[RMDB]
RNA sequence: GGGAACGACUCGAGUAGAGUCGAAAAGAUAUGGAGGUGGGUAGGGAGCUCGUCGGAAACGACUGAGCGAGGAUCUAUUACCUCCUAAGUCAAAACCAGUUUAUGUACUUCGGUACAUAAACUGGAACCAUAUCGGGAUGUUCGCAUCCCGAUAUGGAAAAGAAACAACAACAACAAC
Reactivity to DMS in 0.01 (KOAc 150mM, MgCl2 10mM, bicine 150mM(pH8.5), 24C), signal-to-noise 2, nucleotides 027 to 126: g010a030u000a300u000g000g000a010g000g030u000g010g010g010u000a010g010g000g000a080g020c010u010c000g010u000c000g020g000a080a110a190c010g020a010c010u010g030a000g010c010g010a020g000g010a030u000c040u000a010u000u000a040c010c000u000c000c000u000a010a090g010u010c030a070a090a160a170c010c010a010g000u000u000u000a000u000g000u010a000c000u000u010c130g020g010u000a000c000a000u000a000a000a000c000u000g000g000a050a060
Reactivity to 2A3 in 0.01 (KOAc 150mM, MgCl2 10mM, bicine 150mM(pH8.5), 24C), signal-to-noise 3, nucleotides 027 to 126: g030a020u080a040u160g010g020a010g010g030u160g100g070g030u030a010g020g000g010a000g010c010u000c000g020u000c000g000g080a080a070a060c020g050a010c150u300g000a000g000c000g010a140g000g000a000u010c010u010a020u010u050a020c000c000u000c010c000u000a050a010g050u010c030a000a010a080a180c010c000a010g000u000u000u000a010u010g000u000a000c010u040u080c300g120g000u000a010c000a000u010a000a000a000c000u000g000g010a000a010
Record summary
Source: RMDB library TTRDEL, as collected in RNAgym. Chemical mapping of a 177-nucleotide RNA with DMS and 2A3. For DMS the reverse transcriptase was MarathonRT.